RNA sequence: GGGAACGACUCGAGUAGAGUCGAAAAAUCACAAUCGUAUACAUAUGCAUAAUCGACACCACGGCGUUAAUGCAUUAUGUGGUGUCGCAACGCCAACAUUGCAUGAUACAUUAAUGCUAUAGCACCACACGAUGUCAGUAUUAAUACCGUAUAACGCAGACGUUCUCACUUUCGAGUGAGAACGUCUAAAAGAAACAACAACAACAAC
Reactivity to 2A3 in 0.01 (KOAc 150mM, MgCl2 10mM, bicine 150mM(pH8.5), 24C), signal-to-noise 1, nucleotides 027 to 156: a000u230c110a090c120a060a080u300c000g150u200a080u010a070c040a030u070a090u200g000c000a000u070a230a000u080c010g000a000c030a000c010c000a000c080g000g000c000g120u060u280a120a000u220g090c180a180u040u140a180u300g000u000g010g000u010g030u000c000g000c000a000a000c030g000c050c000a000a000c030a180u050u050g050c000a000u010g000a000u000a090c120a070u000u010a000a000u000g000c030u070a050u030a150g000c000a010c020c010a090c000a070c160g000a000u070g030u070c070a000g000u000a080u010u010a040a140u040a030c000c070g070u000a120u000a180a070c050g000c270